Source: RMDB library OK3TST, as collected in RNAgym. Structure probing data (2A3) for a 207-nucleotide construct. 2A3 adducts were read by reverse transcription with SuperScript II with manganese. The reactions ran in a buffer of 150 mM KOAc, 10 mM MgCl2 and 150 mM bicine (pH 8.5), at 24 C.
RNA sequence: GGGAACGACUCGAGUAGAGUCGAAAAUAUUACCAGAACAACGUGUUCAUGUCUUCUUCUAAAUGUUGGGUUGAACCAGACCUUAGUGUUGGACCACAUGAAUUUUGUUCACAGCACACUAUGCAAAUAACAACUCCAGAAGGUAAUUAUUACCUACAAUCUGGCAUCAGUUCGCUGAUGCCAGAUUAAAAGAAACAACAACAACAAC
Reactivity to 2A3 in 0.01 (KOAc 150mM, MgCl2 10mM, bicine 150mM(pH8.5), 24C), signal-to-noise 2, nucleotides 027 to 156: u120a020u020u060a040c010c030a060g020a010a010c030a030a060c030g090u100g020u100u010c020a000u100g000u020c040u040u000c010u080u050c020u130a080a070a030u130g040u150u040g020g030g010u020u010g040a160a060c030c000a020g100a050c000c000u030u110a050g010u080g040u110u060g050g010a080c050c020a020c010a030u040g080a110a050u160u230u000u050g010u070u060c010a000c030a100g070c020a030c020a020c110u150a080u160g010c010a040a020a220u140a140a070c030a000a020c020u120c090c000a130g040a200a010g110g000u060a030a050u000u130a070u070u040a000c000c000u010a060c070
Background: Values are in units of 0.01, from 0 to 300, in steps of 10.